This 207-nucleotide RNA was probed chemically with 2A3. Values cover nucleotides 27 to 156. 2A3 adducts were read by reverse transcription with SuperScript II with manganese. The 2A3 profile rests on 889 reads.
RNA sequence: GGGAACGACUCGAGUAGAGUCGAAAAACUGGGAUUAGAUACCCCACUAUGCCUAGCCCUAAACCCAAAUAGUUACAUAACAAAACUAUUCGCCAGAGUACUACUCGCAACUGCCUAAAACUCAAAGGACUUGGCGGUGCUUCACAUCCACCUAGAGGGAUUAUAUCGACUUCGGUCGAUAUAAUCCAAAAGAAACAACAACAACAAC
Reactivity to 2A3 in 0.01 (KOAc 150mM, MgCl2 10mM, bicine 150mM(pH8.5), 24C), signal-to-noise 2, nucleotides 027 to 156: a000c040u050g000g050g000a040u060u060a090g030a060u220a130c020c010c000c020a010c020u100a060u160g020c000c010u030a000g030c000c000c000u080a120a090a060c020c000c100a000a120a020u040a010g020u030u060a040c070a100u210a220a050c070a050a150a040a020c010u020a040u090u110c060g040c050c030a010g000a000g060u030a020c030u000a010c000u050c020g050c060a060a100c080u070g010c010c000u090a140a090a060a060c020u040c060a040a130a100g010g000a020c020u020u060g000g000c020g000g020u020g000c040u000u040c030a030c000a040u020c020c000a010c020c020u030a030g020a060g190